Source: RMDB library RFM100, as collected in RNAgym. An RNA of 177 nucleotides, treated with 2A3 and read out base by base.
RNA sequence: GGGAACGACUCGAGUAGAGUCGAAAAUAACAAAUCUAAUCGUGUAUUGCACUGGAAAAGAAAUAUUCUUAUUAUGUAUUUUCUCCAAAUAAUGGCCUACCAUUGCAUUUGAAUACCUGCUGUAAAUACGUGUCUUGAGAUUCGUCUCAAGACACGUAAAAGAAACAACAACAACAAC
Reactivity to 2A3 in 0.01 (KOAc 150mM, MgCl2 10mM, bicine 150mM(pH8.5), 24C), signal-to-noise 2, nucleotides 027 to 126: u090a020a030c030a010a030a020u020c040u050a000a080u070c150g000u030g010u200a140u130u110g000c020a010c070u000g040g040a040a160a060a040g030a000a030a000u080a030u060u110c010u060u190a270u120u050a080u140g010u000a030u030u150u000u030c030u030c000c020a100a030a000u080a080a170u180g000g000c000c010u000a050c080c030a070u000u100g000c000a000u110u030u000g000a060a000u080a040c000c000u090g090c000u030g050u130a010a080a000u080
2A3 adducts were read by reverse transcription with SuperScript II with manganese. The reactions ran in a buffer of 150 mM KOAc, 10 mM MgCl2 and 150 mM bicine (pH 8.5), at 24 C. Reactivities are given for positions 27 through 126.